[RMDB]
RNA sequence: GGGAACGACUCGAGUAGAGUCGAAAAGAAACUCCACAGUUUGCAUUUAUGACUAUUGGAAUGGCAUUGCAUCAAGAUGAACCUGUUGAUAGAUUAAAACAUGUUAUUCGUUUUUAUGAAGCAGUAUCUACUCGACAGAUUUCACUACCAACUCCUAACGGAUCAAUUUAUUCGUAAAUUGAUCCGUAAAAGAAACAACAACAACAAC
Reactivity to 2A3 in 0.01 (KOAc 150mM, MgCl2 10mM, bicine 150mM(pH8.5), 24C), signal-to-noise 5, nucleotides 027 to 156: g020a030a050a010c040u040c030c010a030c020a070g070u040u050u060g010c010a040u060u120u120a110u210g070a070c020u050a080u110u130g050g030a060a050u030g030g000c030a030u020u080g010c030a040u040c060a100a030g080a160u040g020a010a010c010c000u000g000u000u000g000a010u010a030g010a010u060u180a040a060a070a030c080a130u030g020u050u120a140u080u060c020g050u020u020u050u060u170a200u160g010a010a000g010c000a010g000u010a010u000c000u000a010c130u000c000g010a000c000a020g010a030u020u050u000c010a010c020u050a070c030c020a050a040c040u000c020c020u060a030
Reactivity to DMS in 0.01 (KOAc 150mM, MgCl2 10mM, bicine 150mM(pH8.5), 24C), signal-to-noise 2, nucleotides 027 to 156: g010a150a090a100c070u000c020c010a060c040a070g020u010u030u000g000c040a100u000u000u000a090u010g020a130c060u000a140u010u000g000g020a060a220u000g060g020c020a090u010u000g000c020a100u010c080a100a170g000a120u010g000a050a040c060c010u000g020u000u000g010a080u000a000g000a100u010u000a050a050a070a070c120a080u000g020u000u000a180u010u010c040g020u000u000u000u000u000a100u030g020a040a070g020c010a050g020u010a080u000c010u000a010c100u010c010g040a020c010a020g010a070u000u000u000c030a070c040u000a050c050c010a050a090c070u000c020c020u010a160
Structure probing data (2A3 and DMS) for a 207-nucleotide construct. DMS adducts were read by reverse transcription with MarathonRT. Source: RMDB library OK3TST, as collected in RNAgym. The 2A3 profile rests on 3,533 reads. Conditions: 150 mM KOAc, 10 mM MgCl2 and 150 mM bicine (pH 8.5), 24 C.